Structure probing data (2A3) for a 207-nucleotide construct.
High 2A3 reactivity points to a flexible backbone, as in loops and unpaired stretches.
The 2A3 profile rests on 492 reads.
The reactions ran in a buffer of 150 mM KOAc, 10 mM MgCl2 and 150 mM bicine (pH 8.5), at 24 C.
Values are in units of 0.01, from 0 to 300, in steps of 10.
RNA sequence: GGGAACGACUCGAGUAGAGUCGAAAAGUACCUCGAGUUUUGUCAGAAUGUGGUCGACGAGGUGAACUCGAGUUUUUCGUGGGAGGAUAAAGCAAGAGAGUUGACGUAUUCUCUCGACCUAAUGGGGAAUGUUCUUCAUGUCUCUCUUACGGGAGACCGGAGCCGAACGGUUCGCCGUUCGGCUCCGAAAAGAAACAACAACAACAAC
Reactivity to 2A3 in 0.01 (KOAc 150mM, MgCl2 10mM, bicine 150mM(pH8.5), 24C), signal-to-noise 1, nucleotides 027 to 156: g030u070a120c020c020u030c030g000a040g000u050u070u040u060g090u160c010a060g180a200a130u200g080u120g110g060u070c010g000a070c090g050a030g000g000u030g010a000a000c000u000c000g010a070g000u100u050u000u030u020c020g000u110g030g000g010a030g000g010a020u070a070a120a000g010c030a140a000g010a000g010a100g000u030u030g110a070c000g090u140a100u110u000c020u000c000u000c010g070a090c000c000u050a150a160u110g000g000g020g070a100a000u180g010u060u030c000u080u060c000a070u140g000u020c000u010c000u000c010u090u150a050c150g000g000g000a000g000a000c030
It was measured as part of the RMDB library OK3TST. For 2A3 the reverse transcriptase was SuperScript II with manganese.